[RMDB]
RNA sequence: GGGAACGACUCGAGUAGAGUCGAAAAGGGCGCUCAAACCGGCGCGGCUGCUGGUGUCCGGGAGUGCGGCACUACCCGUGCCGGUGUUCGACAAGCUGGUGCAGCUCACCGGGCACCGGCCCGUCGAAAGUUGAGGACAUUUCGAUGUCCUCAACUUAAAAGAAACAACAACAACAAC
Reactivity to DMS in 0.01 (KOAc 150mM, MgCl2 10mM, bicine 150mM(pH8.5), 24C), signal-to-noise 1, nucleotides 027 to 126: g020g020g010c060g010c020u000c070a030a130a190c060c010g000g020c020g030c070g020g030c250u010g030c110u000g020g020u000g010u010c000c040g010g010g000a100g040u010g020c040g000g000c000a000c000u000a040c100c000c010g000u000g000c030c000g000g030u000g010u000u000c030g020a010c030a020a130g000c030u010g000g010u000g000c030a110g000c030u000c070a080c040c090g010g010g010c010a010c020c000g000g000c000c050c000g000u000c030g010a040